RNA sequence: GGGAACGACUCGAGUAGAGUCGAAAACCCUCCUAGAACUCGCAGUGUGGCUGCAGCAUUAUUUUUUUACACAAAGAGAAUGAGUAAUGUUAGUUUUCAAUUUGGAGAACUACCAGAUUGGGUUGCACUACUCAUAGUAGUUCGCUACUAUGAGUAGAAAAGAAACAACAACAACAAC
Reactivity to DMS in 0.01 (KOAc 150mM, MgCl2 10mM, bicine 150mM(pH8.5), 24C), signal-to-noise 9, nucleotides 027 to 126: c010c000c010u000c050c040u000a090g010a080a070c060u010c160g010c050a050g010u010g020u010g020g010c040u000g010c040a160g000c010a020u000u000a010u000u010u010u000u000u010u010a130c130a120c190a080a100a100g010a160g010a050a020u000g010a040g000u000a020a030u000g000u010u000a050g000u000u000u000u000c020a050a090u000u000u000g010g000a060g000a060a080c150u010a050c030c020a030g000a050u000u000g000g000g000u000u000g020c110a190
Reactivity to 2A3 in 0.01 (KOAc 150mM, MgCl2 10mM, bicine 150mM(pH8.5), 24C), signal-to-noise 7, nucleotides 027 to 126: c010c000c000u020c010c010u100a110g040a120a060c020u040c140g020c040a040g000u050g030u100g300g020c010u020g000c010a010g000c010a000u000u030a050u030u070u010u010u010u050u130a110c130a010c040a050a170a020g160a040g020a050a040u060g010a010g030u040a030a020u020g010u060u060a060g010u010u030u050u080c030a040a070u060u030u160g070g010a080g030a080a060c050u070a050c040c010a010g020a090u040u060g040g020g030u070u090g000c030a040
Annotation
This 177-nucleotide RNA was probed chemically with DMS and 2A3. Conditions: 150 mM KOAc, 10 mM MgCl2 and 150 mM bicine (pH 8.5), 24 C. Reactivities are given for positions 27 through 126.